About this RNA
The record gives the reactivity of an RNA of 177 nucleotides to 2A3 and DMS. For DMS, 1,811 sequencing reads were counted. The RNA was probed in 150 mM KOAc, 10 mM MgCl2 and 150 mM bicine (pH 8.5) at 24 C.
RNA sequence: GGGAACGACUCGAGUAGAGUCGAAAAGGUAGCAGAGAAGAGACUAGCCUUCAGACUAGAUAGUAUCACACUACGGGUACAUAGUAGAGACAUACAUAGAUGUGUAUGACACAUCAGAGCUGCCAUGGACCGGUAAUUAGUUCGCUAAUUACCGGUCAAAAGAAACAACAACAACAAC
Reactivity to 2A3 in 0.01 (KOAc 150mM, MgCl2 10mM, bicine 150mM(pH8.5), 24C), signal-to-noise 3, nucleotides 027 to 126: g000g010u010a000g000c040a010g040a010g020a230a020g070a010g070a120c030u010a020g050c000c010u090u120c060a080g030a180c010u010a010g010a120u060a040g090u030a000u050c010a020c000a010c170u150a040c070g030g000g060u060a030c040a090u090a030g010u020a010g030a000g030a070c020a050u070a010c010a050u110a050g090a070u100g030u000g020u030a150u300g070a020c010a000c000a070u010c000a000g060a010g050c000u010g020c030c020a030u050g050
Reactivity to DMS in 0.01 (KOAc 150mM, MgCl2 10mM, bicine 150mM(pH8.5), 24C), signal-to-noise 3, nucleotides 027 to 126: g010g020u000a010g030c010a070g030a160g010a090a130g010a210g010a140c020u000a090g020c020c020u000u000c190a170g000a070c050u000a020g010a200u000a080g020u000a050u010c100a140c200a130c080u010a030c070g010g030g000u010a060c100a070u020a070g020u000a010g000a130g000a090c150a030u010a060c050a060u010a170g010a040u000g000u000g000u000a080u030g000a110c010a020c030a020u000c010a090g000a110g020c000u000g000c010c050a100u000g000
For 2A3, 2,268 sequencing reads were counted.